RNA sequence: GGGAACGACUCGAGUAGAGUCGAAAAGAUAUGGAGUGUGGUAAUAGCAACAGCUUACACUUGGGGUUCUAGUCGGAAACGACUAGAACCCCAAGUGUAAGACAUGCUGAUACCCACUCCUAAGUCACUUAACAGUUUAGUUCGCUAAACUGUUAAGAAAAGAAACAACAACAACAAC
Reactivity to DMS in 0.01 (KOAc 150mM, MgCl2 10mM, bicine 150mM(pH8.5), 24C), signal-to-noise 2, nucleotides 027 to 126: g030a030u000a300u010g000g020a010g040u000g000u030g040g030u000a020a170u010a060g010c010a030a100c250a240g010c000u000u010a010c000a010c000u000u000g010g030g000g010u020u000c030u000a040g050u020c020g020g000a100a130a240c050g090a040c000u000a000g020a000a020c040c000c000c000a000a010g010u010g000u010a000a010g000a020c080a090u000g000c000u010g010a150u000a020c010c010c000a010c010u000c000c010u000a010a070g000u000c040a250
Chemical mapping of a 177-nucleotide RNA with DMS. The reactions ran in a buffer of 150 mM KOAc, 10 mM MgCl2 and 150 mM bicine (pH 8.5), at 24 C. It was measured as part of the RMDB library TTRINS.